[RMDB]
RNA sequence: GGGAACGACUCGAGUAGAGUCGAAAAACGAGAUAAUGUGCUUACAGAAAGUUGGUUGAAUUGAAUGCAAUUAAUGUUUGGAGGCACUUAGUCUUCUAGUGUUUGAAUGUGGAUGGAAUUAAAGCUGAGCCAAUUAAAACUUCGGUUUUAAUUGGCUAAAAGAAACAACAACAACAAC
Reactivity to 2A3 in 0.01 (KOAc 150mM, MgCl2 10mM, bicine 150mM(pH8.5), 24C), signal-to-noise 2, nucleotides 027 to 126: a000c040g050a000g000a010u030a020a070u250g000u000g010c020u000u090a070c030a000g100a100a080a000g030u050u000g020g000u000u010g040a020a010u030u170g000a170a050u300g080c000a000a020u020u000a040a000u040g110u100u170u030g010g000a000g000g000c000a000c000u010u040a010g000u010c000u080u000c030u040a080g080u110g080u110u200u040g090a280a140u130g020u010g070g110a050u030g030g030a040a100u230u040a200a030a000g090c030u070g000
Reactivity to DMS in 0.01 (KOAc 150mM, MgCl2 10mM, bicine 150mM(pH8.5), 24C), signal-to-noise 3, nucleotides 027 to 126: a090c130g000a050g010a040u000a060a070u020g010u000g010c000u000u000a120c010a060g000a040a060a130g000u020u010g010g000u000u010g000a040a090u030u050g010a160a150u040g010c030a000a010u000u020a020a010u010g000u020u000u010g000g020a060g010g000c010a020c020u010u010a230g010u020c010u000u010c070u000a030g000u020g010u000u000u020g010a040a040u020g010u000g000g010a080u000g010g030a100a110u030u010a070a050a090g010c110u010g000